Structure probing data (2A3 and DMS) for a 207-nucleotide construct. Source: RMDB library OK3TST, as collected in RNAgym. The RNA was probed in 150 mM KOAc, 10 mM MgCl2 and 150 mM bicine (pH 8.5) at 24 C. DMS adducts were read by reverse transcription with MarathonRT. Reactivities are given for positions 27 through 156.

RNA sequence: GGGAACGACUCGAGUAGAGUCGAAAACCCUGCCAUCCCAAUUCAGGAUCUAAGUCCUGAGGCUCCCAGCAGGGCCUCCAGCCUCCUCCAUGUCUCUCUGUGAUGUCCCACACUGGACUAAGGAGACUCAAUAUCCAGUCCCAAGUCUCGCCCCGACUCAGUAGUGUCUAUUCGUAGACACUACUGAAAAAGAAACAACAACAACAAC
Reactivity to 2A3 in 0.01 (KOAc 150mM, MgCl2 10mM, bicine 150mM(pH8.5), 24C), signal-to-noise 2, nucleotides 027 to 156: c010c000c020u000g010c000c030a050u030c010c020c010a040a030u100u030c000a010g000g030a020u040c100u300a170a170g080u010c010c010u020g000a010g010g010c030u020c020c030c000a010g000c020a030g030g000g000c010c030u000c010c010a090g000c000c020u010c000c000u010c020c020a040u070g030u000c010u010c000u000c020u060g030u020g110a090u070g040u040c000c020c000a070c000a010c050u050g000g010a010c000u030a070a080g030g010a030g010a020c040u030c090a080a100u080a070u110c030c000a030g040u030c010c020c000a070a000g040u000c020u010c040g040c000c010c010c020g040a040c020
Reactivity to DMS in 0.01 (KOAc 150mM, MgCl2 10mM, bicine 150mM(pH8.5), 24C), signal-to-noise 1, nucleotides 027 to 156: c020c010c020u000g020c010c040a190u000c000c020c000a290a240u000u010c020a040g020g000a030u000c120u000a170a160g020u000c030c000u000g000a070g030g010c060u010c020c000c000a230g000c030a120g050g050g040c020c040u000c010c020a040g000c040c000u000c000c000u000c020c030a090u000g000u000c020u000c040u000c030u000g050u000g000a210u000g000u020c040c010c030a060c070a030c060u010g040g000a070c070u000a100a150g020g000a130g010a080c040u000c070a010a210u000a130u000c020c040a060g000u000c030c000c020a070a200g000u000c000u000c060g010c000c000c000c030g000a200c300